Structure probing data (2A3 and DMS) for a 177-nucleotide construct. DMS adducts were read by reverse transcription with MarathonRT. The data come from the RNA Mapping Database (RMDB), library OK2TRN.
[RMDB]
RNA sequence: GGGAACGACUCGAGUAGAGUCGAAAAGCCGCGAUCGGCAUUAUACGAUCGGCAUCGUAAUCGAUGCCGCGUAAUUAUAGCCGCGGCCGUAGCAUGCCGAUAUCGGCCGCGGCAUCGGCUAGCUACGUAUCUACGCCGUGUUCGCACGGCGUAGAUAAAAAGAAACAACAACAACAAC
Reactivity to 2A3 in 0.01 (KOAc 150mM, MgCl2 10mM, bicine 150mM(pH8.5), 24C), signal-to-noise 1, nucleotides 027 to 126: g030c020c020g100c030g090a070u030c000g070g070c100a020u140u080a120u020a140c030g040a120u170c000g000g000c000a020u000c000g190u250a210a070u300c060g000a020u020g010c000c040g050c000g000u020a160a030u120u190a100u130a160g060c070c040g000c010g000g000c010c010g000u030a030g000c050a010u100g030c050c020g030a020u030a090u100c040g010g050c040c000g000c030g020g000c030a000u000c000g020g080c020u030a050g050c050u050a030c060g130
Reactivity to DMS in 0.01 (KOAc 150mM, MgCl2 10mM, bicine 150mM(pH8.5), 24C), signal-to-noise 1, nucleotides 027 to 126: g030c000c000g070c300g010a080u010c040g000g010c000a090u000u010a130u000a030c010g030a050u000c000g000g000c000a000u000c010g010u020a100a170u010c040g000a020u000g000c000c030g030c040g000u000a010a040u000u020a100u000a140g060c000c000g010c010g040g020c000c000g000u000a050g000c100a110u000g020c020c020g000a050u010a050u010c020g000g000c080c070g010c010g000g030c000a010u010c010g000g030c020u000a090g040c170u000a110c160g010